[RMDB]
RNA sequence: GGGAACGACUCGAGUAGAGUCGAAAAACCGAAUCGGGAGCACCAUCUGCGUAGGCUUGUGGUUUAAGGCUUGCGCCACCUACGGUCUUGGAUAGCCCCCGCCAGGCAGGGACCCCAAUACCUGUGCUUGCCAGUUUAAUUUCGAUUAAACUGGCAAAAAAGAAACAACAACAACAAC
Reactivity to DMS in 0.01 (KOAc 150mM, MgCl2 10mM, bicine 150mM(pH8.5), 24C), signal-to-noise 4, nucleotides 027 to 126: a110c040c030g010a100a060u020c030g010g010g000a080g010c020a110c040c020a020u010c100u010g000c060g010u010a020g010g010c090u000u040g020u000g000g010u010u030u020a080a050g010g010c030u010u060g020c220g030c020c050a050c020c000u020a040c060g010g010u020c020u000u000g010g000a060u020a070g010c040c000c000c010c000g020c130c080a060g010g000c040a060g000g000g000a100c040c010c010c030a080a100u020a100c020c000u000g000u010g010c130
Reactivity to 2A3 in 0.01 (KOAc 150mM, MgCl2 10mM, bicine 150mM(pH8.5), 24C), signal-to-noise 4, nucleotides 027 to 126: a000c030c010g040a040a080u080c010g000g000g050a020g020c000a020c100c000a040u030c050u280g080c010g020u030a020g020g040c050u160u120g070u140g050g150u070u210u250a100a020g030g020c060u100u170g050c080g000c010c000a010c000c000u020a010c020g040g110u080c080u040u070g000g000a100u070a080g020c000c000c010c000c000g010c020c010a060g000g030c010a000g020g000g040a080c000c030c000c000a020a000u060a050c000c000u000g010u070g120c010